[RMDB]
RNA sequence: GGGAACGACUCGAGUAGAGUCGAAAACCUCCUCGCUGGCGCCGGCUGGGCAACAUUCCGAGGGGACCGUCCCCUCGGUAAUGGCGAAUGGGACCCAGAGAUCUCUCUAGAUUCCGAUAGAGAAUCGUAACUUAGGGCUUCGGCCCUAAGAAAAGAAACAACAACAACAAC
Reactivity to 2A3 in 0.01 (KOAc 150mM, MgCl2 10mM, bicine 150mM(pH8.5), 24C), signal-to-noise 6, nucleotides 027 to 129: c000c000u030c020c000u010c030g030c040u070g050g010c080g030c030c000g040g030c010u050g020g030g010c000a040a040c010a060u050u010c010c000g010a010g000g010g010g030a050c020c030g300u300c020c000c010c000u000c000g010g000u020a020a010u020g010g000c030g080a030a050u080g010g010g040a020c000c000c010a010g010a000g010a070u000c020u000c000u000c010u110a030g010a140u150u020c070c070g090a090u050a070g060a010g000a030a030u020c010g030u050a040a030
Reactivity to DMS in 0.01 (KOAc 150mM, MgCl2 10mM, bicine 150mM(pH8.5), 24C), signal-to-noise 7, nucleotides 027 to 129: c050c040u020c070c010u050c020g000c050u060g000g050c050g040c040c000g060g000c000u020g030g010g060c040a180a100c060a100u000u000c020c000g060a050g010g000g010g000a180c170c240g070u000c050c000c020c010u010c030g030g020u000a000a050u020g020g050c070g000a110a090u040g010g020g020a140c000c010c030a090g020a110g000a070u010c090u010c010u010c010u000a000g020a090u030u000c080c070g030a110u040a080g030a110g030a050a050u020c010g020u060a080a110